[RMDB]
RNA sequence: GGGAACGACUCGAGUAGAGUCGAAAAACACUUGAAGUGUCCAGCAAGUCAGAGCCCUGCAAUGAAUGUUUUGGCGAGUAUGAGGGAAUCAUGAACAGGGAAAUCAUGAAAGAUGAACUUGCAAAGGUGAGCAUAGGCUUUCUUUGCCUUUCACACACCGGGAUAAAUCAUUCGUGAUUUAUCCCGGAAAAGAAACAACAACAACAAC
Reactivity to DMS in 0.01 (KOAc 150mM, MgCl2 10mM, bicine 150mM(pH8.5), 24C), signal-to-noise 2, nucleotides 027 to 156: a060c020a030c050u000u000g000a090a130g020u010g020u000c020c030a170g020c010a040a040g020u000c040a110g000a170g040c030c030c000u000g010c050a190a100u000g020a100a120u000g000u000u000u000u000g000g010c030g000a100g030u010a130u010g010a120g010g010g000a130a120u000c020a010u000g010a070a080c000a090g000g040g010a150a070a100u010c010a050u020g010a160a090a160g000a130u010g000a050a080c030u000u020g070c030a030a030a040g010g030u010g010a060g030c070a160u000a130g020g000c010u010u000u000c090u000u000u000g000c020c030u000u000u000c020a060c030a130c040a160
Reactivity to 2A3 in 0.01 (KOAc 150mM, MgCl2 10mM, bicine 150mM(pH8.5), 24C), signal-to-noise 6, nucleotides 027 to 156: a000c020a020c030u080u130g100a170a030g040u020g040u070c040c020a020g020c000a020a040g020u050c040a040g020a130g190c010c010c000u030g030c050a010a070u090g080a110a040u070g070u080u140u080u100g070g020c060g010a040g040u100a110u180g040a070g020g020g030a040a020u020c010a020u020g030a040a040c020a050g000g020g040a070a060a010u070c020a030u060g060a090a070a020g060a020u090g010a030a050c020u030u010g000c010a040a040a040g050g010u030g020a020g010c070a100u080a090g060g020c010u020u150u050c000u080u110u120g010c000c010u030u090u060c050a050c000a000c000a010
An RNA of 207 nucleotides, treated with DMS and 2A3 and read out base by base. For DMS, 3,538 sequencing reads were counted. 2A3 adducts were read by reverse transcription with SuperScript II with manganese. Conditions: 150 mM KOAc, 10 mM MgCl2 and 150 mM bicine (pH 8.5), 24 C.